Source: RMDB library OK3TST, as collected in RNAgym. An RNA of 207 nucleotides, treated with 2A3 and DMS and read out base by base. For DMS the reverse transcriptase was MarathonRT.
RNA sequence: GGGAACGACUCGAGUAGAGUCGAAAAGCAAAUAAGGUACAAUUCUUGCAGCUGUUCCUGCCGGCAACCGAAGAGCAAGAUCGGUAUACACCGUAAUCUUCCCAUUUGGAGGAAUAAUAUAAUGAUAGGCGCUGCAUAAAAUUAAUCCCAGGCCUCCCCUAACGAAGGUAUUCGUACCUUCGUUAGGAAAAGAAACAACAACAACAAC
Reactivity to 2A3 in 0.01 (KOAc 150mM, MgCl2 10mM, bicine 150mM(pH8.5), 24C), signal-to-noise 2, nucleotides 027 to 156: g060c030a040a030a160u150a200a000g030g000u080a060c040a000a140u050u030c010u040u030g000c010a000g020c040u050g040u160u110c000c000u010g050c020c020g030g040c020a050a040c000c000g010a020a010g040a040g130c050a030a020g060a150u090c010g030g000u060a080u050a160c120a020c000c010g010u020a040a110u020c030u000u010c010c000c030a070u130u080u210g030g000a060g020g050a040a020u090a120a030u120a020u040a050a170u090g060a040u070a060g050g000c040g000c070u000g000c000a010u060a020a080a010a000u000u060a010a030u020c020c000c020a010g140g000c000c000u030c000c030
Reactivity to DMS in 0.01 (KOAc 150mM, MgCl2 10mM, bicine 150mM(pH8.5), 24C), signal-to-noise 1, nucleotides 027 to 156: g000c010a070a050a000u000a120a090g030g020u000a110c060a080a100u000u010c030u000u000g060c000a040g040c020u010g010u020u000c040c000u000g030c090c050g010g040c070a160a050c080c020g020a070a130g000a130g000c080a010a120g020a050u000c050g000g000u010a240u000a040c150a050c010c010g000u000a070a140u000c070u000u000c000c000c060a280u000u000u010g100g020a100g020g020a080a090u000a110a110u000a110u000a060a100u000g000a160u000a090g010g030c160g050c010u000g000c000a060u020a010a020a060a120u020u020a070a190u000c000c020c000a170g010g000c030c030u010c040c000
2A3 adducts were read by reverse transcription with SuperScript II with manganese. Reactivities are rounded to 0.1 and cut off at 0 and 3.